[RMDB]
RNA sequence: GGGAACGACUCGAGUAGAGUCGAAAAACUAUCAGAACAGAGGCGGCGCUGCUCGCCGAUCAAUUGAAUCUCAAGAGGAGCUUCGCAAGGAUGACUGAGCUAAUCAAGUCAGAGACACGCAAGCAGCGCAUGUAUGUACUUUCGAGUACAUACAUGCAAAAGAAACAACAACAACAAC
Reactivity to 2A3 in 0.01 (KOAc 150mM, MgCl2 10mM, bicine 150mM(pH8.5), 24C), signal-to-noise 6, nucleotides 027 to 126: a000c100u110a110u190c040a050g070a190a090c020a060g060a050g160g000c020g020g020c050g010c040u070g000c010u020c010g000c000c010g000a020u020c010a020a090u100u140g050a060a050u010c020u010c050a070a050g040a050g260g020a020g040c020u040u030c040g010c080a070a070g110g030a090u060g010a030c010u020g010a010g030c110u150a040a110u080c050a150a030g040u010c020a000g020a000g010a090c020a020c160g040c040a040a030g000c020a010g020c010
Reactivity to DMS in 0.01 (KOAc 150mM, MgCl2 10mM, bicine 150mM(pH8.5), 24C), signal-to-noise 8, nucleotides 027 to 126: a120c070u000a100u020c080a110g010a100a120c120a100g000a170g010g010c040g020g000c110g010c050u000g010c030u000c020g010c060c040g000a110u000c090a090a100u000u010g010a060a070u000c010u010c030a110a130g000a110g010g000a080g000c060u000u000c080g010c160a080a130g020g010a110u000g000a070c020u000g000a050g010c150u010a060a100u000c050a040a080g000u000c030a050g000a140g010a080c140a070c180g010c100a040a030g000c020a040g010c070